[RMDB]
RNA sequence: GGGAACGACUCGAGUAGAGUCGAAAAGACUACCACAUUUUCUCCUAAUAGAGUUUAGUGGCUAUGCUUAUGGGAUAGAUGAAAAGUGCCAUGAUCUGAAGAGGGGGAGCUGUUCCGUGUCUUUCCUCCGGUUGCUCACGUUCGCGUGAGCAACCGGAAAAGAAACAACAACAACAAC
Reactivity to 2A3 in 0.01 (KOAc 150mM, MgCl2 10mM, bicine 150mM(pH8.5), 24C), signal-to-noise 1, nucleotides 027 to 126: g060a050c130u140a090c000c000a000c000a000u140u060u010u000c000u000c000c000u090a160a100u160a020g140a050g060u110u090u040a100g010u080g000g080c010u070a070u160g100c040u090u000a120u120g110g080g000a070u110a100g080a030u200g010a200a000a000a000g070u060g000c000c000a000u020g050a100u000c000u060g000a000a010g040a130g150g000g000g000g000a000g050c000u010g000u060u020c020c000g000u000g000u000c000u000u030u000c000c000u030
The record gives the reactivity of an RNA of 177 nucleotides to 2A3.
It was measured as part of the RMDB library RFM100.
The RNA was probed in 150 mM KOAc, 10 mM MgCl2 and 150 mM bicine (pH 8.5) at 24 C.